[RMDB]
RNA sequence: GGGAACGACUCGAGUAGAGUCGAAAAACUUUGGCCGACGCUGCUAGGCGGGUGCGCACAGCUGUCUGGCCCGGCGCCGCGCUAGGGCGCACGUUUCGCUCUGCGGAGGGUAACCGGGCUGAAAUAAUUCCUGCUAUAGGUUCGCCUAUAGCAGGAAAAAAGAAACAACAACAACAAC
Reactivity to DMS in 0.01 (KOAc 150mM, MgCl2 10mM, bicine 150mM(pH8.5), 24C), signal-to-noise 2, nucleotides 027 to 126: a070c080u000u010u010g000g020c040c040g020a080c080g000c030u000g000c130u000a130g020g010c030g000g000g010u000g000c060g040c040a200c050a080g010c030u000g020u000c050u030g000g000c000c010c010g020g010c270g030c000c040g010c020g010c050u020a030g020g000g000c020g000c140a030c200g000u010u000u000c010g010c000u000c000u010g000c020g010g000a100g020g020g020u000a130a110c000c010g000g010g000c020u000g000a040a060a070u010a070a170

About this RNA:
Structure probing data (DMS) for a 177-nucleotide construct. It was measured as part of the RMDB library M2PK90. The RNA was probed in 150 mM KOAc, 10 mM MgCl2 and 150 mM bicine (pH 8.5) at 24 C.